Description:
The record gives the reactivity of an RNA of 177 nucleotides to 2A3 and DMS. Reactivities are given for positions 27 through 126. In probing experiments dimethyl sulfate is read out at A N1 and C N3, which are open when not base-paired. It was measured as part of the RMDB library OK2TST.
[RMDB]
RNA sequence: GGGAACGACUCGAGUAGAGUCGAAAAACUCAUCUCCAUCUACCGAUUGGAACCAAUACGUGAUUCCUCCUUUAGCCACACCAAGUUCGCGCAAUUCUAAGUCUACGCAAUCUGCGGUCCCUGAAAAAUUACUGGGACUGUUCGCAGUCCCAGUAAUAAAAGAAACAACAACAACAAC
Reactivity to 2A3 in 0.01 (KOAc 150mM, MgCl2 10mM, bicine 150mM(pH8.5), 24C), signal-to-noise 1, nucleotides 027 to 126: a000c040u060c020a080u070c030u010c020c000a020u010c040u070a060c000c050g080a120u000u140g010g020a020a070c010c000a020a060u120a190c080g000u040g050a140u100u060c010c010u020c000c060u050u100u110a040g020c010c030a070c000a010c000c010a050a080g000u050u040c020g040c000g010c080a020a120u010u060c020u100a090a020g030u040c010u030a040c060g000c030a000a090u000c030u120g000c010g000g080u010c000c000c000u000g050a070a060a060a070
Reactivity to DMS in 0.01 (KOAc 150mM, MgCl2 10mM, bicine 150mM(pH8.5), 24C), signal-to-noise 2, nucleotides 027 to 126: a040c080u000c030a090u000c040u000c010c000a100u000c020u010a070c090c030g010a110u010u030g030g010a070a080c060c030a080a050u010a120c110g030u000g020a160u000u010c020c010u010c040c000u000u000u000a070g040c070c020a100c110a080c050c080a010a080g030u000u000c070g000c060g000c000a020a090u020u000c060u000a060a170g000u000c020u000a020c050g050c000a020a040u000c060u000g010c030g030g000u000c000c010c000u000g020a030a030a070a100